[RMDB]
RNA sequence: GGGAACGACUCGAGUAGAGUCGAAAAGAUAUGGAGUGGCCGUCGCUCGCGAAACCUUAAUAUACGUAACAUCACAUCGGAAACGAUGUGUGGUAUAUUAAGGGAGAGCCACGGCCACUCCUAAGUCCCUAUAAGGCUAGUUCGCUAGCCUUAUAGGAAAAGAAACAACAACAACAAC
Reactivity to DMS in 0.01 (KOAc 150mM, MgCl2 10mM, bicine 150mM(pH8.5), 24C), signal-to-noise 5, nucleotides 027 to 126: g020a110u010a300u010g010g000a020g030u000g000g010c000c000g050u000c300g020c010u000c010g020c210g010a130a160a240c000c000u000u000a010a000u000a000u000a010c000g010u000a090a190c180a050u020c010a010c000a000u010c000g010g000a140a090a270c000g010a010u000g010u010g010u000g000g010u000a000u000a000u000u000a000a000g010g020g000a050g010a020g010c000c140a010c000g010g000c000c000a000c000u000c000c000u000a010a070g010u010c050
Reactivity to 2A3 in 0.01 (KOAc 150mM, MgCl2 10mM, bicine 150mM(pH8.5), 24C), signal-to-noise 2, nucleotides 027 to 126: g070a040u160a050u270g010g000a010g030u020g000g050c000c000g000u000c020g000c010u010c000g040c060g150a190a150a070c010c000u000u000a020a000u000a000u000a000c100g150u190a210a140c060a240u300c010a010c000a010u000c010g040g060a090a050a030c020g000a010u000g000u020g000u000g030g000u010a010u010a000u010u010a000a020g000g030g030a040g030a000g010c020c020a000c020g000g000c000c000a000c000u000c020c000u010a000a010g000u040c030
Annotation
This 177-nucleotide RNA was probed chemically with DMS and 2A3. The 2A3 profile rests on 5,427 reads. It was measured as part of the RMDB library TTRINS. For 2A3 the reverse transcriptase was SuperScript II with manganese.